An RNA of 177 nucleotides, treated with DMS and read out base by base.
It was measured as part of the RMDB library M2PK50.
For DMS, 4,818 sequencing reads were counted.
Reactivities are given for positions 27 through 126.
[RMDB]
RNA sequence: GGGAACGACUCGAGUAGAGUCGAAAACCAUAGGAUUUCGAUCCUAUGGCCUGCUAUGUCCCGUAAUAGCUUUUCGACUCUACUUGGGUCGUUCCCACGCGAUGGGGACCGGUUUCGACCGGUCCAAACUUAACACGCUAUUCGUAGCGUGUUAAGUAAAAGAAACAACAACAACAAC
Reactivity to DMS in 0.01 (KOAc 150mM, MgCl2 10mM, bicine 150mM(pH8.5), 24C), signal-to-noise 3, nucleotides 027 to 126: c000c000a000u000a000g010g000a010u000u000u010c140g010a020u000c000c010u000a000u000g000g020c200c100u010g010c000u000a000u000g000u000c070c070c160g010u000a110a010u000a010g000c010u000u000u000u000c000g000a020c000u000c000u000a000c000u000u000g000g000g010u000c000g000u000u000c000c000c010a010c080g020c150g010a090u010g010g000g010g010a010c000c000g000g010u000u000u010c200g000a030c000c000g020g000u000c000c010a010a020

Record summary:
The RNA was probed in 150 mM KOAc, 10 mM MgCl2 and 150 mM bicine (pH 8.5) at 24 C. For DMS the reverse transcriptase was MarathonRT.